RNA sequence: GGGAACGACUCGAGUAGAGUCGAAAACCCAGUGGAGCGAUGAAGCCUGCCCAGCGGGGCUUGGCGGUCAUGGGCUUUCUCUCCGGAGGGAGAGAAAGUACCAUGAUAGCUGGGGGAAUCGGCGAGGGCCACUCUUAAAUUUCGAUUUAAGAGUGGCAAAAGAAACAACAACAACAAC
Reactivity to DMS in 0.01 (KOAc 150mM, MgCl2 10mM, bicine 150mM(pH8.5), 24C), signal-to-noise 5, nucleotides 027 to 126: c000c000c000a130g020u010g010g000a080g010c030g010a080u020g000a140a100g010c010c010u010g020c020c010c020a130g020c080g000g000g010g010c020u010u010g000g010c020g000g020u000c010a000u000g000g000g000c000u000u000u000c000u000c010u000c000c000g020g070a230g020g010g010a020g000a000g000a000a000a020g010u000a020c000c000a000u000g000a010u000a060g010c020u010g000g000g000g000g010a120a080u020c060g010g000c040g000a100g030g000
Reactivity to 2A3 in 0.01 (KOAc 150mM, MgCl2 10mM, bicine 150mM(pH8.5), 24C), signal-to-noise 5, nucleotides 027 to 126: c010c000c000a010g060u080g040g080a070g020c060g040a080u080g090a110a030g030c000c010u030g010c030c000c000a040g080c060g050g020g000g010c020u040u090g050g010c020g020g010u000c000a000u000g000g000g000c000u000u000u000c000u000c000u000c000c000g100g160a180g140g070g000a000g010a000g000a010a000a010g000u020a160c000c000a000u000g000a000u010a010g000c010u010g000g000g000g000g030a030a100u090c030g030g000c030g030a070g020g090

About this RNA: Structure probing data (DMS and 2A3) for a 177-nucleotide construct. The RNA was probed in 150 mM KOAc, 10 mM MgCl2 and 150 mM bicine (pH 8.5) at 24 C. As a SHAPE reagent, 2A3 marks flexible, mostly unpaired nucleotides at the ribose 2'-OH. For DMS the reverse transcriptase was MarathonRT.